[RMDB]
RNA sequence: GGGAACGACUCGAGUAGAGUCGAAAAUCGGCGUGCUGGUGGCGCAACCCCUGAUCCGGCUCCUGAGCAGCCAGGCGUUCGUCAGCCGCGGUACGCCCACGCUGGCCUUGCUGUUCAUCGCGGUGGGCGUCCUAUUUUAGUUCGCUAAAAUAGGACGAAAAGAAACAACAACAACAAC
Reactivity to 2A3 in 0.01 (KOAc 150mM, MgCl2 10mM, bicine 150mM(pH8.5), 24C), signal-to-noise 9, nucleotides 027 to 126: u130c020g030g000c010g020u060g010c030u130g060g080u040g020g000c010g000c030a040a090c020c010c000c020u040g050a110u110c070c070g060g000c020u030c030c080u180g100a050g030c060a010g010c050c000a010g010g000c010g030u080u120c070g070u160c070a030g020c010c010g010c010g000g000u010a010c030g010c000c020c000a030c050g040c040u070g040g000c000c010u060u150g020c030u040g030u120u100c050a080u100c100g010c020g030g040u040g010g020g010
Reactivity to DMS in 0.01 (KOAc 150mM, MgCl2 10mM, bicine 150mM(pH8.5), 24C), signal-to-noise 9, nucleotides 027 to 126: u020c090g000g020c020g010u020g020c010u000g000g020u010g010g020c020g010c060a090a100c050c070c020c030u020g010a080u020c130c090g010g000c010u000c040c100u030g020a090g020c080a050g000c060c030a080g010g010c150g010u000u020c060g000u020c030a060g010c020c020g020c020g010g020u010a040c060g000c000c000c020a040c060g000c020u010g000g000c030c020u010u010g020c050u000g010u010u010c080a070u030c090g010c020g010g020u000g000g000g010